[RMDB]
RNA sequence: GGGAACGACUCGAGUAGAGUCGAAAACUCAGUGUGUCCGUGACCCUGUGGGAUUUUGUUUGUCAAAUACCCCCUGUAAUGUCUGUCAAUAUUGGAUUGGAUAUGGGUGCAAUUGUGACUCGCUUAGCAACCCGCGACUUCGGUCGCGGGAAAAGAAACAACAACAACAAC
Reactivity to 2A3 in 0.01 (KOAc 150mM, MgCl2 10mM, bicine 150mM(pH8.5), 24C), signal-to-noise 3, nucleotides 027 to 129: c000u020c000a000g030u020g000u000g000u000c010c020g040u030g040a000c000c000c000u010g000u210g000g000g030a000u020u020u060u030g160u050u170u240g190u100c010a000a020a000u070a040c000c000c000c000c000u000g070u160a110a120u080g100u000c020u000g000u030c000a150a000u000a240u200u100g130g010a060u030u180g010g010a050u070a040u140g030g000g010u020g110c020a050a130u050u090g000u000g010a000c000u030c000g000c060u000u040a000g040c010a000a120
Reactivity to DMS in 0.01 (KOAc 150mM, MgCl2 10mM, bicine 150mM(pH8.5), 24C), signal-to-noise 1, nucleotides 027 to 129: c030u010c050a020g010u000g000u010g000u080c030c220g030u040g060a070c000c070c120u020g010u000g010g000g030a120u000u000u000u000g050u010u080u070g040u070c000a000a020a120u030a300c040c040c000c000c010u040g010u040a060a020u010g020u000c000u000g030u000c020a030a180u060a160u000u110g070g000a040u010u140g020g030a020u000a110u050g000g030g030u040g050c000a080a140u000u030g000u040g000a020c000u010c070g030c080u010u000a050g000c060a090a170
An RNA of 170 nucleotides, treated with 2A3 and DMS and read out base by base. Conditions: 150 mM KOAc, 10 mM MgCl2 and 150 mM bicine (pH 8.5), 24 C. DMS adducts were read by reverse transcription with MarathonRT. For DMS, 3,151 sequencing reads were counted.